[RMDB]
RNA sequence: GGGAACGACUCGAGUAGAGUCGAAAACUGUAAUCACGCUUCUGUGAGGUCUGAUUGUGGGAUGGCCUGAGGCUGGGGAUCACUGUGUAGUGGACCAGCCAUGUUGACGGAACGUCCGCACUAAGCUUGCCAUCAAUAUGGGUGCCGAGGAGGAGUCGAUAUGGAGAGAGUUCGCUCUCUCCAUAUCAAAAGAAACAACAACAACAAC
Reactivity to DMS in 0.01 (KOAc 150mM, MgCl2 10mM, bicine 150mM(pH8.5), 24C), signal-to-noise 1, nucleotides 027 to 156: c050u010g030u010a060a080u000c030a070c060g020c070u000u000c030u030g010u010g000a030g010g040u000c050u000g000a120u000u000g000u000g000g000g020a130u000g010g010c030c030u010g000a090g030g010c010u000g030g010g030g000a170u000c000a050c020u000g020u010g050u000a030g050u000g020g000a120c000c030a040g000c000c000a030u000g000u000u000g010a120c020g030g000a080a070c070g020u000c010c020g000c060a100c100u000a080a110g010c050u000u010g000c020c020a070u000c030a040a080u010a080u000g000g000g030u000g030c030c050g010a090g030g010a070g000g000a120g030u000c060
Reactivity to 2A3 in 0.01 (KOAc 150mM, MgCl2 10mM, bicine 150mM(pH8.5), 24C), signal-to-noise 4, nucleotides 027 to 156: c040u030g110u220a070a080u070c030a020c060g030c040u040u010c070u210g150u040g050a040g010g040u000c030u080g110a210u140u110g030u080g040g080g000a030u040g050g010c020c010u080g020a060g030g000c010u010g000g010g000g080a040u080c000a010c010u060g050u070g110u300a030g000u020g000g020a040c000c000a000g000c000c000a000u060g000u020u030g030a060c010g050g030a080a080c040g040u020c030c010g010c000a060c080u080a070a060g060c040u050u090g040c010c010a030u010c000a020a070u150a080u110g060g000g000u040g070c030c040g010a020g020g020a010g010g030a010g020u120c080

Structure probing data (DMS and 2A3) for a 207-nucleotide construct. High DMS reactivity at an A or C suggests that its Watson-Crick edge is free. The 2A3 profile rests on 1,893 reads.